An RNA of 177 nucleotides, treated with DMS and read out base by base.
Reactivities are rounded to 0.1 and cut off at 0 and 3.
The reactions ran in a buffer of 150 mM KOAc, 10 mM MgCl2 and 150 mM bicine (pH 8.5), at 24 C.

RNA sequence: GGGAACGACUCGAGUAGAGUCGAAAAGGUUCCGUCUUCGGACGGAACCAAACAUAGUAUACCCUGUUCCAUGUAUACUAUGAUAUACCGUAAUGCAACGGAAAAUGCCUAGUUUCGACUAGGCAAAGGAUAGGAAGGUCUUCGGACCUUCCUAUCCAAAAGAAACAACAACAACAAC
Reactivity to DMS in 0.01 (KOAc 150mM, MgCl2 10mM, bicine 150mM(pH8.5), 24C), signal-to-noise 1, nucleotides 027 to 126: g020g000u010u000c000c000g030u000c000u000u010c300g010g000a030c000g000g000a000a000c000c030a010a030a080c010a000u000a010g030u000a000u000a010c010c060c080u000g050u000u010c070c000a160u000g010u000a000u000a000c010u000a010u000g000a240u000a060u010a170c000c000g000u000a140a150u020g000c290a060a100c030g010g000a060a050a110a150u000g000c000c000u020a000g000u000u000u000c130g000a010c030u000a020g000g000c030a000a000a110